[RMDB]
RNA sequence: GGGAACGACUCGAGUAGAGUCGAAAAUCGGCAGCGGCGUCUUCUCCGCACCCUCGCCCGCUUCCGCGCUGGUCGCUCUGGCUACUACCCGGUGGAUACAACUGUAGCUUGAAGCCUGCCCGCCCUUUUUCUUCUAUCUUCUGCUGCGCGGCGAGGGGACCCAUUAUCUGUUCGCAGAUAAUGGGUCAAAAGAAACAACAACAACAAC
Reactivity to 2A3 in 0.01 (KOAc 150mM, MgCl2 10mM, bicine 150mM(pH8.5), 24C), signal-to-noise 2, nucleotides 027 to 156: u190c030g080g010c060a060g010c030g000g020c040g060u030c130u160u010c100u020c010c020g010c040a090c010c010c000u010c000g030c010c010c020g000c000u190u060c110c030g060c020g010c080u060g010g020u040c020g030c010u020c040u020g000g010c010u010a020c000u080a070c010c060c020g160g000u150g030g060a120u130a220c100a190a020c180u080g020u020a000g000c000u010u050g070a110a000g000c000c020u050g020c010c020c030g060c030c000c020u120u220u090u170u140c050u200u060c040u060a270u050c100u260u050c050u180g060c040u080g000c000g040c060g020g010c000g000a000g010g010g000

Description: Conditions: 150 mM KOAc, 10 mM MgCl2 and 150 mM bicine (pH 8.5), 24 C. An RNA of 207 nucleotides, treated with 2A3 and read out base by base. 2A3 adducts were read by reverse transcription with SuperScript II with manganese. Reactivities are given for positions 27 through 156. For 2A3, 1,012 sequencing reads were counted. Source: RMDB library VIROID, as collected in RNAgym.